[RMDB]
RNA sequence: GGGAACGACUCGAGUAGAGUCGAAAAGUCAUGCCUUUUGGCAUGACAGGUAGCUUUUGCUACCGAAGAGUCUACCGCCCAUCCAAACGGUAGACUCGAGACAUAUAUAUAUUAAUGCCGACCUUAAUAUAUAUAUGGAACGGUCGGAGGGAUGGGAAGCACUCAUUUAUUUCGAUAAAUGAGUGCUAAAAGAAACAACAACAACAAC
Reactivity to DMS in 0.01 (KOAc 150mM, MgCl2 10mM, bicine 150mM(pH8.5), 24C), signal-to-noise 2, nucleotides 027 to 156: g000u000c000a000u010g000c000c000u000u000u000u000g050g020c000a010u010g040a010c000a020g030g020u010a010g000c010u000u010u000u010g060c000u000a010c000c010g010a030a100g000a040g000u000c010u000a030c000c000g000c000c010c030a090u000c060c040a180a140a100c020g020g030u000a010g000a010c000u000c000g000a090g000a190c010a000u000a010u000a020u000a020u000a020u010u000a010a050u010g020c020c200g000a130c080c040u000u000a020a020u010a020u000a010u000a030u020a010u010g000g000a110a090c170g000g040u000c030g030g010a070g000g020g000a080u000g010g020g000a270
Reactivity to 2A3 in 0.01 (KOAc 150mM, MgCl2 10mM, bicine 150mM(pH8.5), 24C), signal-to-noise 4, nucleotides 027 to 156: g010u000c000a000u000g000c000c000u150u300u250u300g000g000c010a000u000g000a000c000a000g000g000u000a000g000c030u100u140u290u300g000c000u000a000c000c000g000a110a040g000a000g000u000c000u000a000c010c010g010c020c000c000a020u000c020c000a150a120a080c020g000g000u010a000g000a010c000u000c010g020a070g060a000c000a000u020a000u010a000u000a000u000a010u070u110a110a040u090g070c020c010g030a040c000c030u030u060a120a010u010a000u010a000u000a000u000a010u050g060g000a060a030c060g020g060u110c040g040g020a040g020g000g010a000u010g000g000g000a000

Structure probing data (DMS and 2A3) for a 207-nucleotide construct. For DMS the reverse transcriptase was MarathonRT. For DMS, 4,902 sequencing reads were counted.